[RMDB]
RNA sequence: GGGAACGACUCGAGUAGAGUCGAAAAUACUCAUUGUGCCUGAUACUGUACUAAUCGCAAGAUUGGUGGACAAAAGAGGGAAUAGAUAAUCCUCUCAAAGUGGUAUCGCAAAGCCUGUAGUCUCAAGACGGAAUAGCCUUUUCGAAGGCUAUUCCGUAAAAGAAACAACAACAACAAC
Reactivity to 2A3 in 0.01 (KOAc 150mM, MgCl2 10mM, bicine 150mM(pH8.5), 24C), signal-to-noise 2, nucleotides 027 to 126: u100a000c000u010c090a110u140u020g070u060g120c010c010u040g000a040u000a010c030u030g000u020a020c000u000a000a000u000c000g000c030a090a000g000a000u020u010g030g000u010g000g000a040c030a000a090a020a000g000a020g040g020g030a050a010u070a100g110a050u040a080a060u180c000c000u030c000u000c010a050a010a000g130u120g040g000u010a000u020c000g010c110a060a060a000g040c000c060u000g060u030a000g020u010c010u000c040a000a030g040
Reactivity to DMS in 0.01 (KOAc 150mM, MgCl2 10mM, bicine 150mM(pH8.5), 24C), signal-to-noise 2, nucleotides 027 to 126: u050a080c020u030c080a120u010u040g000u010g000c000c010u000g000a000u020a000c000u010g030u020a000c010u000a000a010u000c000g000c300a130a110g000a030u000u000g000g010u000g020g010a070c040a050a070a220a010g000a050g000g000g040a070a060u000a130g010a070u120a040a060u040c000c000u000c000u000c090a040a050a100g000u000g000g030u000a000u000c000g000c230a050a190a100g000c070c100u000g060u000a040g010u010c000u050c070a130a030g040
An RNA of 177 nucleotides, treated with 2A3 and DMS and read out base by base. The data come from the RNA Mapping Database (RMDB), libraries RFM100 and RFMREP. For DMS the reverse transcriptase was MarathonRT. 2A3 adducts were read by reverse transcription with SuperScript II with manganese. High 2A3 reactivity points to a flexible backbone, as in loops and unpaired stretches.